[RMDB]
RNA sequence: GGGAACGACUCGAGUAGAGUCGAAAAGAUAUGGAGGCUGUAGGUAGAGCGAUAUCGGAAACGAUAUUCGCUCUAUAAUCUACGGCCUCCUAAGUCAAACACACGUUGUGUUCGCACAACGUGUGAAGUACCGUGAAACGUUCGCGUUUCACGGUACAAAAGAAACAACAACAACAAC
Reactivity to DMS in 0.01 (KOAc 150mM, MgCl2 10mM, bicine 150mM(pH8.5), 24C), signal-to-noise 1, nucleotides 027 to 126: g020a020u000a240u010g010g000a000g010g020c000u000g040u010a020g010g000u000a030g030a020g000c000g000a010u000a010u000c010g010g000a040a060a100c000g020a010u000a000u000u010c020g030c000u000c010u000a040u010a220a070u000c000u000a000c010g000g010c000c000u000c000c010u010a030a090g000u000c000a180a140a300c000a000c010a000c020g000u010u000g010u000g010u000u030c300g030c050a000c000a000a000c000g080u010g000u000g000a050a080
Notes
Chemical mapping of a 177-nucleotide RNA with DMS. Values cover nucleotides 27 to 126. The reactions ran in a buffer of 150 mM KOAc, 10 mM MgCl2 and 150 mM bicine (pH 8.5), at 24 C.